RNA sequence: GGGAACGACUCGAGUAGAGUCGAAAACGCGCCGAACUGCUGCGGAUAAUGACUCAUAUCUACAUCAGCAACCAUAGAGAAAGUGACAUCGCGCUGAUUACGAUUAAUACGGCUGGCAAGCGUGACACAGCGUGAAAUACUUCGGUAUUUCACGCUGAAAAGAAACAACAACAACAAC
Reactivity to DMS in 0.01 (KOAc 150mM, MgCl2 10mM, bicine 150mM(pH8.5), 24C), signal-to-noise 2, nucleotides 027 to 126: c040g000c030g020c060c020g010a070a110c110u000g000c070u020g000c110g000g020a020u000a030a140u010g000a110c060u000c110a210u000a060u000c030u000a080c140a040u000c010a040g000c080a050a160c050c090a080u000a070g000a200g000a020a040a110g000u000g010a100c080a080u000c080g050c060g000c070u030g000a110u000u000a050c110g000a070u000u000a010a220u000a070c000g000g000c020u000g010g030c050a070a040g000c030g030u000g010a080c170a170
Reactivity to 2A3 in 0.01 (KOAc 150mM, MgCl2 10mM, bicine 150mM(pH8.5), 24C), signal-to-noise 2, nucleotides 027 to 126: c000g010c020g000c010c010g060a130a120c100u080g020c040u040g010c020g000g000a140u110a130a170u190g090a050c020u050c110a040u010a020u100c020u020a040c030a090u020c000a000g030c000a050a120c050c030a070u160a050g170a020g040a050a130a060g140u050g070a040c020a040u090c070g000c020g000c090u020g030a000u030u030a020c050g000a000u000u050a010a020u090a100c000g000g010c030u040g000g010c050a070a090g010c010g020u020g060a000c020a010